[RMDB]
RNA sequence: GGGAACGACUCGAGUAGAGUCGAAAAUAAUGAUGGCUACGCCGAUUACUGCGAGAACAAGUAUGGGUGCGGGCAUUUUGAUUACCGCAGAAUGUGGAUUAGUAAUUGUCUUGUUCAUCUGGUCCUACUGCUACCAGGUAUUCGUACCUGGUAGCAGAAAAGAAACAACAACAACAAC
Reactivity to 2A3 in 0.01 (KOAc 150mM, MgCl2 10mM, bicine 150mM(pH8.5), 24C), signal-to-noise 2, nucleotides 027 to 126: u120a000a110u110g020a000u000g030g000c020u030a010c040g000c010c000g020a020u030u040a050c000u000g030c030g020a090g020a200a040c020a040a060g040u040a130u200g140g000g080u080g000c020g030g010g020c000a010u090u110u040u070g070a090u080u160a050c000c000g010c000a010g060a060a020u080g010u070g080g040a150u070u060a010g000u000a000a000u040u010g030u020c020u000u030g020u090u070c000a000u020c000u000g030g110u040c010c030u020a070
Reactivity to DMS in 0.01 (KOAc 150mM, MgCl2 10mM, bicine 150mM(pH8.5), 24C), signal-to-noise 2, nucleotides 027 to 126: u020a070a070u000g000a020u010g020g020c010u000a060c100g020c020c020g020a040u000u000a040c020u000g020c070g040a220g000a070a090c070a080a050g000u010a090u010g040g030g010u010g030c040g020g010g000c060a060u010u010u010u020g010a160u000u010a150c060c080g020c020a040g010a050a100u000g010u000g010g010a150u000u010a030g000u010a020a040u000u000g020u000c060u030u000g010u000u000c010a030u000c040u000g010g020u000c010c000u000a130

Source: RMDB library OK2TST, as collected in RNAgym. Structure probing data (2A3 and DMS) for a 177-nucleotide construct. Values cover nucleotides 27 to 126. The RNA was probed in 150 mM KOAc, 10 mM MgCl2 and 150 mM bicine (pH 8.5) at 24 C. For DMS the reverse transcriptase was MarathonRT.